[RMDB]
RNA sequence: GGGAACGACUCGAGUAGAGUCGAAAAGUUGAGAGCGUUUAACUUAAGUCUUUUUUAUUAGCUUAAAAAAACUAUAUACAAGUGGUGGUAGACCGCCACUCUAAGGGGACGCCUUUAGAAGAAGAGGGAAAGGCACUAAGCUUCGGCUUAGUGCCAACCAGUAUUUCUAGUUCGCUAGAAAUACUGGAAAAGAAACAACAACAACAAC
Reactivity to 2A3 in 0.01 (KOAc 150mM, MgCl2 10mM, bicine 150mM(pH8.5), 24C), signal-to-noise 3, nucleotides 027 to 156: g050u070u070g040a030g010a010g060c010g000u060u100u110a090a070c030u070u050a040a020g050u110c040u080u210u070u030u020u040a180u110u140a100g020c030u010u040a000a030a050a020a020a020a020c190u200a200u070a080u090a230c030a070a040g000u010g010g000u010g020g020u060a050g080a100c010c010g020c000c010a010c010u020c010u010a020a010g000g000g050g000a010c030g060c010c020u080u080u070a050g020a110a000g030a050a000g030a120g010g030g010a070a110a160g020g010c000a000c000u000a000a000g020c000u030u080c300g040g000c000u000u000a000g000u000g000c000c000a000a000
Reactivity to DMS in 0.01 (KOAc 150mM, MgCl2 10mM, bicine 150mM(pH8.5), 24C), signal-to-noise 1, nucleotides 027 to 156: g000u010u000g020a110g000a060g020c040g010u010u000u010a010a100c040u000u000a090a150g000u000c010u000u000u000u000u000u000a050u030u000a120g000c040u010u000a000a010a090a050a050a030a020c020u000a100u000a150u000a180c000a040a070g000u000g030g010u000g060g040u020a190g000a100c000c020g000c020c000a040c000u010c030u000a000a070g000g020g020g000a140c210g000c020c020u000u000u000a070g010a060a110g010a050a070g010a070g000g000g000a140a060a180g020g050c030a030c010u000a000a000g010c000u000u020c300g050g060c010u000u000a050g050u010g040c000c010a010a030
Structure probing data (2A3 and DMS) for a 207-nucleotide construct. Conditions: 150 mM KOAc, 10 mM MgCl2 and 150 mM bicine (pH 8.5), 24 C. The data come from the RNA Mapping Database (RMDB), library M2RFPK. For 2A3, 1,643 sequencing reads were counted.